About this RNA:
The record gives the reactivity of an RNA of 177 nucleotides to 2A3 and DMS. Source: RMDB library RFMREP, as collected in RNAgym. Reactivities are rounded to 0.1 and cut off at 0 and 3. Conditions: 150 mM KOAc, 10 mM MgCl2 and 150 mM bicine (pH 8.5), 24 C. High 2A3 reactivity points to a flexible backbone, as in loops and unpaired stretches.

RNA sequence: GGGAACGACUCGAGUAGAGUCGAAAAUCUUAGUUCGCUAAGACACAUUGUUCUUUGGUCUUUCAGCCAUGACCUGACCUUCUGUCUGUGAGACCAAAGAACUACUUAACGCCCCUUUCGAGGGGCGCUUACUGAACAACUUCGGUUGUUCAGUAAGAAAAGAAACAACAACAACAAC
Reactivity to 2A3 in 0.01 (KOAc 150mM, MgCl2 10mM, bicine 150mM(pH8.5), 24C), signal-to-noise 4, nucleotides 027 to 126: u020c010u010u010a010g010u060u070c200g030c100u020a010a010g020a020c030a010c010a190u070u180g010u010u000c000u010u000u000g000g000u000c010u000u020u010c000a000g000c020c020a100u250g040a040c010c070u060g130a120c000c010u030u010c010u020g020u000c000u000g000u000g010a000g010a010c020c000a000a000a000g000a000a000c000u010a000c000u050u090a090a030c010g000c010c000c000c020u030u030u100c140g100a010g000g010g010g010c000g010
Reactivity to DMS in 0.01 (KOAc 150mM, MgCl2 10mM, bicine 150mM(pH8.5), 24C), signal-to-noise 4, nucleotides 027 to 126: u000c010u000u000a020g010u000u010c170g040c000u000a010a000g000a060c200a140c180a120u000u010g010u000u000c000u000u000u000g020g020u000c000u000u000u000c000a020g010c040c010a040u000g000a020c200c030u000g020a140c260c150u010u000c030u000g000u000c010u000g000u000g010a010g000a030c000c010a000a010a020g000a000a000c000u020a020c130u010u000a070a230c030g000c000c010c000c000u000u000u000c120g020a010g010g010g010g020c000g000